This 207-nucleotide RNA was probed chemically with 2A3 and DMS. 2A3 is a SHAPE reagent: it acylates the 2'-hydroxyl of flexible nucleotides of all four kinds. High DMS reactivity at an A or C suggests that its Watson-Crick edge is free. The RNA was probed in 150 mM KOAc, 10 mM MgCl2 and 150 mM bicine (pH 8.5) at 24 C. The data come from the RNA Mapping Database (RMDB), library RNAMAK.

RNA sequence: GGGAACGACUCGAGUAGAGUCGAAAAGGGGUCACUGACAUGGACGCAUUGACUCAUCGAUCCUGAAGCCUCCACGGGGGAGAGUCACCUCGGGCGUCCAACAGCAGUGACGGAGGCACCCAAAAGAUCUUCACCAGGUUCGCCUGGUGAAGAUCAACGCCUAAAAUAAGUUCGCUUAUUUUAGGCGAAAAGAAACAACAACAACAAC
Reactivity to 2A3 in 0.01 (KOAc 150mM, MgCl2 10mM, bicine 150mM(pH8.5), 24C), signal-to-noise 5, nucleotides 027 to 156: g100g010g010g000u010c000a000c010u020g080a070c040a180u100g010g000a010c010g000c090a160u050u220g010a010c020u000c030a300u080c210g150a220u110c020c000u020g020a040a030g000c000c000u000c000c000a020c040g000g000g010g020g010a050g020a000g020u010c030a060c070c100u220c180g130g130g000c000g000u010c020c010a030a010c030a020g100c010a000g000u000g000a010c000g000g000a010g010g000c000a030c000c000c010a050a120a010a050g000a000u000c000u010u000c000a000c000c000a020g000g070u070u070c170g110c090c000u000g010g000u000g000a000a000g000a000u000c000a000a000
Reactivity to DMS in 0.01 (KOAc 150mM, MgCl2 10mM, bicine 150mM(pH8.5), 24C), signal-to-noise 1, nucleotides 027 to 156: g030g030g000g010u000c010a070c000u010g010a180c130a270u000g020g040a020c000g050c000a180u000u000g010a030c020u010c020a240u000c080g010a170u000c010c000u000g000a070a170g000c040c000u030c000c000a300c020g000g020g050g020g000a130g000a070g000u010c010a110c300c110u010c150g030g020g010c000g040u000c010c010a020a150c070a140g010c030a010g010u000g020a070c000g000g000a020g000g020c020a110c000c000c000a070a080a160a100g000a020u000c010u000u000c000a010c000c000a000g000g030u000u000c300g040c010c000u000g020g010u030g020a000a000g000a000u000c010a040a110